[RMDB]
RNA sequence: GGGAACGACUCGAGUAGAGUCGAAAAAAGAUGACACUUGAGAGAGGUUCCACUCUGCAGAGACAUCUUCACCGUCAGGUGGCGCGCUGGAUUACGAUCGCUGGGGGGUUGGGAUAGAGCGUUGAGAGUCUAAAUACUGCUUCGGCAGUAUUUAGACAAAAGAAACAACAACAACAAC
Reactivity to DMS in 0.01 (KOAc 150mM, MgCl2 10mM, bicine 150mM(pH8.5), 24C), signal-to-noise 3, nucleotides 027 to 126: a050a080g000a020u010g000a230c220a030c030u000u010g010a080g010a090g030a090g010g000u020u010c100c090a210c060u020c030u020g000c070a130g000a090g020a050c080a030u000c030u000u040c070a120c020c050g000u010c190a040g010g050u010g000g030c090g000c060g000c030u020g000g000a130u020u030a100c100g000a040u010c060g000c090u000g020g010g010g000g000g000u010u000g000g000g000a140u000a040g010a060g000c070g000u000u000g000a100g010a150
Reactivity to 2A3 in 0.01 (KOAc 150mM, MgCl2 10mM, bicine 150mM(pH8.5), 24C), signal-to-noise 2, nucleotides 027 to 126: a000a000g020a030u040g000a010c020a010c050u030u030g010a010g000a000g010a040g260g000u060u050c010c000a060c010u040c020u050g000c020a020g040a010g030a120c050a060u030c020u070u060c050a040c040c000g070u120c060a110g040g060u020g030g020c030g000c000g010c040u030g010g000a060u030u090a070c050g060a050u030c020g000c140u030g000g000g010g000g030g000u070u060g020g000g000a030u030a080g060a040g030c030g000u050u070g050a090g010a010

Structure probing data (DMS and 2A3) for a 177-nucleotide construct. The RNA was probed in 150 mM KOAc, 10 mM MgCl2 and 150 mM bicine (pH 8.5) at 24 C. The data come from the RNA Mapping Database (RMDB), libraries RFM100 and RFMREP. 2A3 is a SHAPE reagent: it acylates the 2'-hydroxyl of flexible nucleotides of all four kinds.